[RMDB]
RNA sequence: GGGAACGACUCGAGUAGAGUCGAAAAGCCUCAGGCUCCGAGUUCACCCCAGCAGUUCCAGGGGGUGUUUUUCUUCGAGACGUGGGAAGGGAGGUAAAGCCUUAUCGGAACUGUGAGGCUUCGUGCCAGAAUCCAAGGCUCGGGUACUAGCCAGAGGGUGUCUGUGAAAAUUCGUUUUCACAGACACAAAAGAAACAACAACAACAAC
Reactivity to 2A3 in 0.01 (KOAc 150mM, MgCl2 10mM, bicine 150mM(pH8.5), 24C), signal-to-noise 2, nucleotides 027 to 156: g050c010c010u010c010a020g050g020c030u040c060c000g020a020g030u130u280c060a110c000c010c000c000a040g000c020a010g000u020u020c030c020a060g030g020g030g050g010u030g010u040u060u060u000u010c010u020u020c010g080a060g020a220c040g100u130g010g130g060a060a060g040g000g000a030g000g090u120a120a040a000g020c020c010u060u090a180u300c080g030g010a010a010c000u040g050u020g020a070g000g010c090u020u090c130g070u070g010c000c020a020g130a090a070u110c140c060a120a020g020g000c010u000c000g040g000g010u080a170c080u070a040g000c020c020a020g020a010g040g030